[RMDB]
RNA sequence: GGGAACGACUCGAGUAGAGUCGAAAAGAAGAGCCGGGCUAACAAAGGUGGGAGGCACGCAACCCUUCGCAAGAGCCGAGUGGGAAGGCUAAGCGAAACCAAGACAAAAUGGUUAUAAAUAAUGCAAACUACCAACAGAAUUCGUUCUGUUGGUAGUAAAAGAAACAACAACAACAAC
Reactivity to 2A3 in 0.01 (KOAc 150mM, MgCl2 10mM, bicine 150mM(pH8.5), 24C), signal-to-noise 3, nucleotides 027 to 126: g040a030a000g050a010g040c060c020g010g030g000c030u090a070a030c050a150a080a010g010g010u080g040g030g020a030g000g030c060a010c060g030c010a020a110c020c020c000u000u010c020g000c040a110a070g010a010g200c020c000g020a030g050u190g010g080g030a070a040g010g000c010u020a060a000g000c000g000a000a000a000c000c010a050a000g150a140c040a040a090a020a130u080g000g030u030u040a100u030a150a080a020u230a040a040u080g040c010a120a060
Reactivity to DMS in 0.01 (KOAc 150mM, MgCl2 10mM, bicine 150mM(pH8.5), 24C), signal-to-noise 4, nucleotides 027 to 126: g010a150a110g010a110g020c030c050g020g020g020c070u010a080a090c120a060a090a100g000g020u000g000g010g020a070g000g020c050a060c060g020c050a080a100c070c010c030u010u010c020g020c040a070a110g010a040g030c020c010g000a120g030u010g010g000g000a090a140g010g020c010u010a040a180g020c020g010a040a030a050c020c020a040a100g000a130c120a060a070a050a070u000g000g010u000u000a070u010a040a030a080u010a040a090u000g010c110a090a110